[RMDB]
RNA sequence: GGGAACGACUCGAGUAGAGUCGAAAAGAGCGGGGGUGUCGUGGACCAGCGAGGGUGGCGCGCUGCGUUGACGCGGUGCUCUGCUUGGCUGUGUGUCGGUGUGGCCUGCCCCCCUGUAGAGGGGUGUCGUAGGCUACCCGUUGAAGCGAGGGAAACCGAAUCAUAACAAGUUCGCUUGUUAUGAUUCAAAAGAAACAACAACAACAAC
Reactivity to 2A3 in 0.01 (KOAc 150mM, MgCl2 10mM, bicine 150mM(pH8.5), 24C), signal-to-noise 3, nucleotides 027 to 156: g040a020g020c050g030g010g000g000g030u070g000u050c020g020u040g020g020a020c010c000a000g000c010g040a170g040g040g000u020g020g010c020g000c010g000c030u020g000c040g100u090u250g120a110c030g010c000g010g030u030g010c000u000c000u020g050c000u040u050g100g000c010u030g020u030g020u020g050u190c020g000g000u120g010u010g100g000c000c010u000g010c020c000c000c000c000c000u040g070u160a180g060a040g130g010g000g000u050g060u100c090g000u020a000g000g000c000u010a000c000c000c000g000u000u080g030a040a020g030c020g020a050g000g010g030a080a020a030c060c030
Reactivity to DMS in 0.01 (KOAc 150mM, MgCl2 10mM, bicine 150mM(pH8.5), 24C), signal-to-noise 1, nucleotides 027 to 156: g020a120g020c060g020g000g000g020g040u000g040u000c040g000u000g000g040a090c040c000a050g020c000g000a020g010g000g000u010g040g020c040g130c030g030c020u010g000c020g000u000u000g010a190c060g110c020g040g030u010g010c010u000c010u020g010c020u020u000g030g030c030u000g010u010g030u000g020u010c000g030g020u010g000u000g010g000c010c000u020g010c010c050c020c000c010c000u000g000u010a140g000a080g000g000g010g030u020g030u010c090g010u010a030g050g020c000u000a030c020c000c010g020u000u010g010a070a210g020c050g030a160g030g000g010a070a050a080c110c150